[RMDB]
RNA sequence: GGGAACGACUCGAGUAGAGUCGAAAAGGGAAGUUUGCUAUCCUAGUCUUUUGGCUAGGCUCGAAAGAGGAUGUCGAUCUGCUCCAAGACAUCCGCGAUAGCACGGAGCAGAAUUUUUAUUCCCGAAGGGAGGCAGCUACUUCGGUAGCUGUUUCCCAAAAGAAACAACAACAACAAC
Reactivity to 2A3 in 0.01 (KOAc 150mM, MgCl2 10mM, bicine 150mM(pH8.5), 24C), signal-to-noise 9, nucleotides 027 to 126: g070g020g030a060a040g050u170u260u190g080c030u050a060u070c000c000u000a010g000u000c050u040u250u150u300g000g000c010u010a010g000g000c010u040c030g140a120a070a020g080a010g030g030a060u040g030u040c030g030a060u000c010u030g000c000u000c010c010a070a030g020a050c020a040u020c030c030g040c040g040a070u070a010g030c030a010c090g000g000a000g000c010a000g000a000a010u030u020u010u030u110a110u050u020c000c010c010g000a080a070
Reactivity to DMS in 0.01 (KOAc 150mM, MgCl2 10mM, bicine 150mM(pH8.5), 24C), signal-to-noise 9, nucleotides 027 to 126: g010g010g000a040a060g010u020u030u030g010c020u010a040u010c000c000u000a010g010u000c000u020u040u010u040g010g010c000u010a020g000g010c180u020c100g000a100a110a140g000a070g000g000a030u000g010u010c040g000a130u010c030u010g010c010u000c020c030a130a240g000a030c030a020u010c030c050g010c110g010a060u010a030g000c020a090c190g010g000a030g000c000a040g000a040a030u010u020u030u020u020a130u040u000c000c000c000g020a120a130